An RNA of 207 nucleotides, treated with DMS and 2A3 and read out base by base. The DMS profile rests on 3,846 reads. For 2A3, 2,252 sequencing reads were counted. The RNA was probed in 150 mM KOAc, 10 mM MgCl2 and 150 mM bicine (pH 8.5) at 24 C.

[RMDB]
RNA sequence: GGGAACGACUCGAGUAGAGUCGAAAACUGAUUUACAAAAGAGGGUAUAAACUUGUACUUAUGCAACAUGAAUAUGUUUUAUACCUAAUUUACGGCAUAAGGACUAUAGUCAACAAUGUUCUAUUACACUAGAAAGUUGCUAAGACAGCAGAUUUGAACCUCAUUAUCGUUUCGACGAUAAUGAGGUAAAAGAAACAACAACAACAAC
Reactivity to DMS in 0.01 (KOAc 150mM, MgCl2 10mM, bicine 150mM(pH8.5), 24C), signal-to-noise 2, nucleotides 027 to 156: c080u020g000a170u010u010u000a230c060a150a060a110a100g010a300g000g010g010u000a090u000a030a040a040c090u040u000g020u010a070c040u010u000a040u010g030c080a090a120c110a050u000g020a030a040u020a000u010g010u020u000u000u000a020u000a050c050c030u010a070a150u000u000u000a090c070g030g000c030a040u010a040a070g010g000a130c080u000a110u000a110g010u000c030a020a060c020a030a030u000g010u000u000c020u000a070u000u000a110c120a110c160u000a090g000a050a050a070g000u000u000g020c030u000a090a100g010a130c080a060g000c030a050g000a180u000u000u000g000a110
Reactivity to 2A3 in 0.01 (KOAc 150mM, MgCl2 10mM, bicine 150mM(pH8.5), 24C), signal-to-noise 4, nucleotides 027 to 156: c010u010g050a090u130u120u190a130c080a010a060a010a010g060a080g040g020g000u030a040u030a040a060a050c060u050u100g090u140a070c010u120u140a090u130g040c050a050a050c020a110u110g130a220a050u160a040u170g020u000u060u000u020a030u030a010c000c000u050a000a000u020u060u020a040c020g030g000c020a040u070a090a020g050g020a020c020u110a060u040a200g080u070c010a020a050c020a120a070u100g030u060u030c020u030a040u080u150a060c060a040c090u010a020g050a050a060a020g000u000u010g010c010u010a060a020g050a010c020a020g040c030a010g050a140u090u090u090g120a070